[RMDB]
RNA sequence: GGGAACGACUCGAGUAGAGUCGAAAACGGGAAAACAGCGGCUAGUUUAGGAGGGAAGAAAACCCUUGGGCAAACGCCCAAAGCCUGCGUAUAUUCCGGCCGGAGCAUCCUGGCGCCCAGUUUGGGGACUGAUAACGAUAUUCGUAUCGUUAUCAGUAAAAGAAACAACAACAACAAC
Reactivity to DMS in 0.01 (KOAc 150mM, MgCl2 10mM, bicine 150mM(pH8.5), 24C), signal-to-noise 9, nucleotides 027 to 126: c030g020g000g000a030a030a080a070c240a140g030c020g010g000c010u010a090g010u020u020u020a130g020g010a050g000g010g010a130a110g010a080a100a110a100c020c010c000u000u000g010g000g000c010a070a120a130c270g000c000c000c000a040a080a030g010c010c000u030g050c030g010u000a070u020a150u000u000c000c010g000g010c010c010g000g000a120g010c150a070u030c070c000u020g010g010c050g000c010c000c000a090g010u010u010u020g000g000g000g000
Reactivity to 2A3 in 0.01 (KOAc 150mM, MgCl2 10mM, bicine 150mM(pH8.5), 24C), signal-to-noise 9, nucleotides 027 to 126: c020g010g010g010a030a060a000a000c040a040g010c010g020g000c010u060a080g110u190u190u110a140g060g060a030g030g020g020a110a110g130a140a200a090a110c010c000c000u010u030g000g000g000c130a280a250a070c170g000c010c000c000a030a030a010g000c000c030u120g000c010g010u050a050u000a020u140u000c010c000g010g010c000c010g020g010a060g070c040a090u110c010c030u060g010g000c010g030c000c000c000a000g000u040u070u160g020g000g010g020

Structure probing data (DMS and 2A3) for a 177-nucleotide construct. It was measured as part of the RMDB libraries RFM100 and RFMREP. Values cover nucleotides 27 to 126.